[RMDB]
RNA sequence: GGGAACGACUCGAGUAGAGUCGAAAAGAUGUUAAGCAGUUCUGCAAAGUGCUCACACCGCUGCGACUCGGCGACUCAGAUGCUUUGCAAUAUCAUCCGACGAACGCUCGGUAGCACACUGAGCUGAAGUCGUGAUUUAUUUCGAUAAAUCACGACUAAAAGAAACAACAACAACAAC
Reactivity to 2A3 in 0.01 (KOAc 150mM, MgCl2 10mM, bicine 150mM(pH8.5), 24C), signal-to-noise 9, nucleotides 027 to 126: g070a050u110g020u150u080a060a050g030c020a010g030u070u020c020u040g090c100a100a050a040g030u020g020c010u030c030a140c010a010c040c020g050c110u050g010c030g110a120c040u020c050g030g010c020g050a070c030u030c170a030g020a080u040g020c050u090u100u140g060c030a040a050u100a040u210c040a010u010c010c020g020a040c030g030a170a020c020g000c010u000c000g010g010u030a030g040c040a010c010a010c030u010g000a000g000c000u010g040a040
Reactivity to DMS in 0.01 (KOAc 150mM, MgCl2 10mM, bicine 150mM(pH8.5), 24C), signal-to-noise 6, nucleotides 027 to 126: g020a070u010g010u020u010a090a100g020c030a050g000u020u000c030u000g000c150a100a080a090g010u000g000c030u010c300a150c290a070c030c000g000c090u010g010c050g010a130c130u000c010g000g000c040g000a100c150u010c200a120g010a040u000g000c060u000u030u050g010c160a050a080u060a030u000c040a040u010c010c010g010a030c050g000a030a110c070g000c010u000c000g000g000u000a050g030c100a080c050a120c020u000g000a030g000c000u000g000a100